[RMDB]
RNA sequence: GGGAACGACUCGAGUAGAGUCGAAAAUUUAAAUGGGUGUGGCGCUAAGUAUAUCUUGUUUACCUUAUCUUUCUGUGGAAAAGUUUUGAUGUCUAGGUUUGUCACAUCAUGCCUGUUGCCUAGCACUUAGUGAGUGAUAUUUCGAUAUCACUCACUAAAAAGAAACAACAACAACAAC
Reactivity to 2A3 in 0.01 (KOAc 150mM, MgCl2 10mM, bicine 150mM(pH8.5), 24C), signal-to-noise 5, nucleotides 027 to 126: u050u080u080a040a060a060u210g040g000g000u000g000u010g010g010c000g000c080u040a060a040g080u040a060u020a050u160c030u050u080g090u060u140u070a060c020c010u050u050a090u130c020u020u210u020c050u110g150u220g080g010a060a050a040a040g010u040u060u070u090g060a090u030g040u020c040u020a040g010g050u100u150u150g010u010c000a000c010a020u010c020a010u040g040c010c020u040g040u070u060g010c010c000u020a000g000c020a020c050u000
Reactivity to DMS in 0.01 (KOAc 150mM, MgCl2 10mM, bicine 150mM(pH8.5), 24C), signal-to-noise 7, nucleotides 027 to 126: u010u030u030a060a090a080u020g010g000g020u010g030u010g020g010c010g010c110u000a030a070g020u010a050u010a060u020c050u000u000g000u000u010u010a120c100c030u000u000a070u010c050u010u000u010c120u020g020u020g010g000a050a050a040a070g010u000u010u000u000g000a070u010g010u010c010u000a060g000g010u000u010u010g020u000c030a020c030a040u000c060a060u010g000c030c020u000g010u010u000g010c010c010u000a040g000c080a080c170u010